The record gives the reactivity of an RNA of 177 nucleotides to 2A3 and DMS.
For 2A3, 11,821 sequencing reads were counted.
High DMS reactivity at an A or C suggests that its Watson-Crick edge is free.
2A3 adducts were read by reverse transcription with SuperScript II with manganese.
The data come from the RNA Mapping Database (RMDB), library M2PK50.
RNA sequence: GGGAACGACUCGAGUAGAGUCGAAAAAACUACUUCUUCGGAAGUAGUUAUUCCGUGGGUCUAAUAAGCCCAAGGUGCCAGGUUCGACCCUUGCUGGGCGCAUCACCGACCGAUUCGUCGGUCGGAAUGUAUGCAUAAUGUUCGCAUUAUGCAUACAAAAAGAAACAACAACAACAAC
Reactivity to 2A3 in 0.01 (KOAc 150mM, MgCl2 10mM, bicine 150mM(pH8.5), 24C), signal-to-noise 5, nucleotides 027 to 126: a000a000c010u010a010c010u010u010c000u030u040c300g040g000a010a000g000u000a000g000u000u000a040u040u020c000c000g010u070g000g000g010u020c020u040a050a060u100a200a050g000c000c000c010a000a040g080g010u050g010c020c030a020g020g050u060u090c090g060a260c000c000c020u040u100g070c090u090g030g040g030c030g000c020a040u070c050a020c010c000g000a000c000c010g000a010u030u040c210g040u010c000g070g010u000c000g010g010a010a020
Reactivity to DMS in 0.01 (KOAc 150mM, MgCl2 10mM, bicine 150mM(pH8.5), 24C), signal-to-noise 8, nucleotides 027 to 126: a020a010c000u000a000c000u000u000c000u000u010c200g030g000a010a010g010u000a000g010u000u000a020u000u000c000c000g010u010g010g000g010u000c010u010a120a060u010a150a190g000c010c000c010a070a080g010g010u000g000c030c050a110g010g000u000u000c070g010a120c050c020c020u000u010g020c110u010g000g010g010c060g010c090a060u010c100a210c000c000g000a010c000c000g010a020u000u010c170g010u000c000g000g000u000c000g000g000a020a020